This 207-nucleotide RNA was probed chemically with 2A3 and DMS.
The DMS profile rests on 4,647 reads.
The data come from the RNA Mapping Database (RMDB), library OK3TST.

[RMDB]
RNA sequence: GGGAACGACUCGAGUAGAGUCGAAAAAACAUACCAUUUGUUGACACCGGCUUUACGUCCUUGGAUGAAGUUAGAAGACUCUUGUGUUGGAGCGUUAAUAAUAAUAGCAUCAGAGGCAGUAUUAACUGUAAUACUCUUAGAUGCUGUAAUAGCACCACAUAAAACUUUAUUUCGAUAAAGUUUUAUGAAAAGAAACAACAACAACAAC
Reactivity to 2A3 in 0.01 (KOAc 150mM, MgCl2 10mM, bicine 150mM(pH8.5), 24C), signal-to-noise 2, nucleotides 027 to 156: a000a000c060a090u200a140c030c040a060u100u080u090g020u000u060g030a050c030a020c060c000g000g010c030u100u080u070a040c030g010u020c030c000u060u060g090g010a080u050g040a090a000g020u050u170a070g050a150a020g040a110c020u000c000u220u080g050u010g010u060u000g000g000a040g000c030g020u060u020a030a000u090a120a010u160a070a010u030a060g000c010a000u010c010a000g000a010g030g000c000a000g030u050a190u160u120a150a010c000u000g000u010a040a070u070a200c010u010c000u040u080a070g000a030u000g000c000u000g000u000a010a010u020a020g060c030a010c020c050a010
Reactivity to DMS in 0.01 (KOAc 150mM, MgCl2 10mM, bicine 150mM(pH8.5), 24C), signal-to-noise 2, nucleotides 027 to 156: a050a010c040a110u000a220c060c050a190u000u000u010g020u000u010g000a140c040a100c060c030g000g010c050u000u000u000a040c020g020u000c030c020u020u000g030g030a090u020g010a080a110g020u000u000a130g030a120a120g010a070c010u000c020u000u010g010u020g020u000u000g000g000a080g020c030g000u000u000a080a100u000a070a080u010a090a060u010a030g020c000a010u000c010a100g000a070g070g030c080a030g000u000a090u010u000a060a100c050u010g030u000a050a080u000a090c010u000c000u000u000a170g020a030u000g010c000u000g010u000a040a100u000a090g000c060a070c010c020a150
For 2A3 the reverse transcriptase was SuperScript II with manganese. Conditions: 150 mM KOAc, 10 mM MgCl2 and 150 mM bicine (pH 8.5), 24 C.